RNA sequence: GGGAACGACUCGAGUAGAGUCGAAAAGAACGCAUUAUUCAUGCUAUCAGCGUAUGGAAUGAGCCUCUACUUUUUCGCUGAUAGGUAGGUUCAUGUAUUGCGGAACGUGAAGGCUCAUGAUGUGUUAGAAGGUUAUGUUAUUCGUGACAUAGCUUUCAAAAGAAACAACAACAACAAC
Reactivity to 2A3 in 0.01 (KOAc 150mM, MgCl2 10mM, bicine 150mM(pH8.5), 24C), signal-to-noise 6, nucleotides 027 to 126: g060a010a000c000g000c010a000u000u020a000u050u130c010a010u090g080c010u020a030u100c030a010g030c020g040u080a120u140g040g040a070a040u030g010a000g010c000c000u050c030u050a110c080u140u160u060u090u170c010g000c000u000g000a030u030a010g000g000u140a070g000g000u080u180c000a000u130g070u120a120u030u300g030c020g030g010a020a020c040g030u050g050a040a010g010g000c000u000c000a000u010g010a010u020g010u020g010u030u010a030
Reactivity to DMS in 0.01 (KOAc 150mM, MgCl2 10mM, bicine 150mM(pH8.5), 24C), signal-to-noise 1, nucleotides 027 to 126: g010a000a000c020g000c010a020u000u000a010u020u020c030a080u000g010c020u010a040u030c050a040g000c070g020u010a050u020g000g010a080a050u000g000a000g000c000c000u000c030u010a110c140u010u010u010u010u000c010g000c000u000g000a070u000a000g000g040u120a280g000g000u000u000c150a120u060g000u020a250u100u120g010c000g010g000a020a030c300g010u000g000a020a040g000g000c000u000c000a070u010g000a020u000g000u000g000u000u000a070